Source: RMDB library OK2TST, as collected in RNAgym.
This 177-nucleotide RNA was probed chemically with DMS and 2A3.
2A3 adducts were read by reverse transcription with SuperScript II with manganese.
For DMS, 7,559 sequencing reads were counted.
RNA sequence: GGGAACGACUCGAGUAGAGUCGAAAAUGUUCUGGCUGCACUUGCUGUGGCCACUGAUUUUUAUGGUGGUGUCAUUGAGCUGACGGGCAGUGAUGCCUUUAAGCAAAAAGCGAUGCAGUUGAUCAUCACAUCUCCCAAAUUUCGAUUUGGGAGAUGUAAAAGAAACAACAACAACAAC
Reactivity to DMS in 0.01 (KOAc 150mM, MgCl2 10mM, bicine 150mM(pH8.5), 24C), signal-to-noise 6, nucleotides 027 to 126: u000g010u000u000c030u010g020g000c000u000g000c000a010c120u000u010g040c020u000g020u010g010g010c000c000a000c010u000g010a070u010u010u010u010u010a090u030g010g010u000g010g010u000g010u020c050a140u010u010g000a300g020c010u000g000a170c300g000g000g010c010a010g000u030g000a220u000g020c000c000u000u000u000a160a040g000c000a050a080a050a090a010g020c020g000a020u000g010c010a020g000u000u010g000a040u000c040a040u000c140
Reactivity to 2A3 in 0.01 (KOAc 150mM, MgCl2 10mM, bicine 150mM(pH8.5), 24C), signal-to-noise 4, nucleotides 027 to 126: u060g000u010u000c030u090g080g010c000u010g000c000a150c150u050u090g010c020u020g020u100g140g040c010c000a000c010u070g090a160u080u030u080u110u300a250u300g010g010u020g000g010u060g150u210c100a080u040u150g050a020g030c000u000g010a030c020g000g010g020c010a010g010u030g120a050u040g000c000c000u040u010u050a010a000g000c020a050a000a000a020a040g000c000g020a000u010g010c000a010g030u030u030g020a030u030c010a010u080c020